[RMDB]
RNA sequence: GGGAACGACUCGAGUAGAGUCGAAAAGAGGCCGUCGAAUCGUUUGCCUCCGGCCUCGAACGGCCGCGCAGCGAGAUCAUGACCUUCCUGGCCGCCCGGGAGGCGGCGCAUCAUCGUCUGUUCAGCCGAUACCCUGGUACUUCGGUACCAGGGUAUCAAAAGAAACAACAACAACAAC
Reactivity to 2A3 in 0.01 (KOAc 150mM, MgCl2 10mM, bicine 150mM(pH8.5), 24C), signal-to-noise 4, nucleotides 027 to 126: g040a010g010g010c010c010g040u090c070g040a030a110u070c060g060u140u210u270g050c010c020u020c020c010g020g000c010c000u020c060g030a090a030c050g000g000c000c000g000c020g000c020a000g020c010g030a020g010a080u060c020a040u140g070a080c010c010u050u070c010c010u030g040g010c000c000g020c020c000c000g140g150g000a060g000g000c010g010g010c040g010c010a050u070c010a040u070c010g120u010c040u030g060u060u050c050a040g020c030c050
Reactivity to DMS in 0.01 (KOAc 150mM, MgCl2 10mM, bicine 150mM(pH8.5), 24C), signal-to-noise 2, nucleotides 027 to 126: g000a030g000g000c000c010g000u000c100g010a030a220u010c110g090u010u010u040g050c170c040u010c030c000g000g020c000c010u010c090g000a120a070c240g000g020c010c000g000c240g000c000a030g000c010g000a050g000a030u020c050a090u060g000a300c120c060u020u000c020c000u000g000g010c000c000g000c020c000c060g040g010g010a130g050g000c040g010g000c000g000c220a050u010c070a140u010c010g000u000c000u000g000u000u000c030a070g010c210c060
An RNA of 177 nucleotides, treated with 2A3 and DMS and read out base by base. It was measured as part of the RMDB library OK1LIB. For DMS, 2,317 sequencing reads were counted. The RNA was probed in 150 mM KOAc, 10 mM MgCl2 and 150 mM bicine (pH 8.5) at 24 C. Reactivities are rounded to 0.1 and cut off at 0 and 3. For 2A3 the reverse transcriptase was SuperScript II with manganese. Reactivities are given for positions 27 through 126.